[RMDB]
RNA sequence: GGGAACGACUCGAGUAGAGUCGAAAAGUGGGGAAUUUGAGUCAAACAAUGAAUUCAAAUUAUGAUGCGUUGGAAAAAGCAAUUACUCAAUUUAUCAAUGAUGAUGCGCUUAAAGGGAAAGCGUAUAGAACCCUGAUACGUUCGCGUAUCAGGGUUCAAAAGAAACAACAACAACAAC
Reactivity to DMS in 0.01 (KOAc 150mM, MgCl2 10mM, bicine 150mM(pH8.5), 24C), signal-to-noise 1, nucleotides 027 to 126: g060u040g040g000g040g000a000a000u000u050u000g040a040g000u010c170a000a180a130c260a160a230u000g050a210a000u190u000c000a000a060a000u010u000a140u010g100a030u000g000c080g040u010u000g000g010a000a000a000a000a020g000c050a190a050u010u000a040c050u010c000a060a130u000u000u080a050u040c220a140a250u000g050a100u000g040a000u000g040c250g050c000u000u000a010a040a150g010g050g000a130a170a230g000c000g210u080a000u000a050
Reactivity to 2A3 in 0.01 (KOAc 150mM, MgCl2 10mM, bicine 150mM(pH8.5), 24C), signal-to-noise 2, nucleotides 027 to 126: g080u100g000g000g050g140a000a050u010u000u030g000a000g000u000c020a000a240a150c090a140a260u130g100a020a000u040u020c010a020a040a040u010u050a070u040g190a060u090g000c090g030u160u050g030g000a000a130a000a000a000g050c020a030a030u030u050a000c000u000c030a020a050u010u210u150a140u010c150a060a060u120g000a030u070g010a030u060g010c010g000c010u090u130a220a100a060g080g000g000a100a000a000g010c000g090u000a000u040a060